RNA sequence: GGGAACGACUCGAGUAGAGUCGAAAAUUGCAAAUGAGGGCACUUCAGUGGACUACUCAACAGCUGGGUGUGCAUCAUCCAUUGAUGAUGUGCUUGUGGUUCUCAGGAGGUGGCAGAUUAUUGGAAAUUUUAAUUGGGCCAAUACAUCCACACCAGGCAGGAAGUUAGCAUUCGUGCUAACUUCCUGAAAAGAAACAACAACAACAAC
Reactivity to 2A3 in 0.01 (KOAc 150mM, MgCl2 10mM, bicine 150mM(pH8.5), 24C), signal-to-noise 2, nucleotides 027 to 156: u150u110g100c020a030a040a180u150g000a030g000g000g000c010a010c010u100u070c060a050g000u060g000g000a000c030u110a100c030u030c090a000a110c020a140g030c010u040g000g020g020u050g000u010g000c020a000u010c000a000u000c100c010a150u040u300g000a000u000g010a010u010g000u030g040c050u080u100g050u100g070g020u010u050c050u010c030a010g120g030a040g000g030u010g010g000c060a030g060a070u060u120a010u000u090g040g090a030a120a070u090u200u030u040a130a070u250u300g030g010g000c020c000a030a000u030a040c050a050u000c010c010a010c000a000c090c000a000g110g010